[RMDB]
RNA sequence: GGGAACGACUCGAGUAGAGUCGAAAAGAAAGUUCAAGCAAGCUAGCCGGCAAAAAAGCAAACUUUACCACCAAGGAUAAAAGAGAUCUUAUCCAAGGAUGCAAAAGAUAAUCUCACUUUUGACACCAAAACAGGGAGUAGUUCGCUACUCCCUGAAACCUAAGUAGUACUUCGGUACUACUUAGGUAAAAGAAACAACAACAACAAC
Reactivity to DMS in 0.01 (KOAc 150mM, MgCl2 10mM, bicine 150mM(pH8.5), 24C), signal-to-noise 2, nucleotides 027 to 156: g000a110a090a100g000u010u010c030a090a080g000c030a100a160g040c030u000a170g030c000c050g020g000c010a000a030a060a060a130a060g010c010a040a100a040c020u000u000u000a100c030c030a130c020c020a040a260g030g000a020u000a010a040a040a090g010a280g000a080u000c060u000u000a000u000c000c000a050a240g010g020a080u000g000c050a050a040a080a050g010a080u000a020a040u000c060u000c070a100c010u000u000u000u000g000a120c070a040c030c040a040a040a060a150c010a010g000g000g000a020g030u000a020g010u000u010c300g000c010u000a020c010u000c000c000c010u000g000a010a070
Reactivity to 2A3 in 0.01 (KOAc 150mM, MgCl2 10mM, bicine 150mM(pH8.5), 24C), signal-to-noise 5, nucleotides 027 to 156: g040a000a040a000g010u050u070c070a050a020g020c020a100a030g000c010u050a020g050c030c050g030g000c090a040a060a010a030a010a040g070c060a080a030a010c030u060u040u060a090c020c020a020c030c030a050a050g000g000a020u020a030a040a020a020g130a010g000a030u030c020u020u020a010u010c030c010a010a020g030g010a040u030g020c000a020a020a000a010g030a040u100a130a130u100c040u030c050a050c020u000u040u020u050g100a110c030a040c060c060a040a050a060a110c000a000g010g000g000a000g000u010a000g000u020u060c120g010c070u000a010c000u060c020c000c000u000g000a000a000